[RMDB]
RNA sequence: GGGAACGACUCGAGUAGAGUCGAAAAGCAAGGCCAAGAGGAAGCCCUCGGGCUUCUGCGCAGGCGUUCGAGGGCGGCCCGUCCGAUGCCCGCGGGUAGGCCGCUAGAGCCUGUCGGCGACGGCAGGAGCAGCAGGCAAGUUCGCUUGCCUGCUGCUAAAAGAAACAACAACAACAAC
Reactivity to DMS in 0.01 (KOAc 150mM, MgCl2 10mM, bicine 150mM(pH8.5), 24C), signal-to-noise 5, nucleotides 027 to 126: g000c090a100a100g020g000c000c010a070a120g010a200g020g010a040a040g010c010c000c010u040c300g010g010g010c000u000u000c010u000g000c210g010c150a110g000g010c070g000u000u010c110g010a160g010g000g010c000g000g000c010c010c020g000u000c000c010g000a120u030g000c000c010c020g000c010g010g000g010u000a030g000g010c000c000g000c020u010a070g000a140g000c010c000u000g010u010c000g000g000c200g000a150c040g000g000c000a010g000g030
Reactivity to 2A3 in 0.01 (KOAc 150mM, MgCl2 10mM, bicine 150mM(pH8.5), 24C), signal-to-noise 4, nucleotides 027 to 126: g070c050a050a070g120g010c000c020a070a030g070a040g090g040a030a010g010c000c010c010u070c120g010g000g000c000u010u010c020u020g030c050g030c050a020g020g010c020g030u070u070c080g050a140g030g060g020c010g010g010c000c000c010g020u020c010c010g010a010u090g070c010c000c010g020c010g000g000g010u040a040g000g020c010c020g000c000u010a010g000a010g030c010c000u030g030u050c010g020g000c030g010a070c010g010g000c000a010g000g030
Notes: Structure probing data (DMS and 2A3) for a 177-nucleotide construct. It was measured as part of the RMDB libraries RFM100 and RFMREP. Conditions: 150 mM KOAc, 10 mM MgCl2 and 150 mM bicine (pH 8.5), 24 C. Reactivities are rounded to 0.1 and cut off at 0 and 3.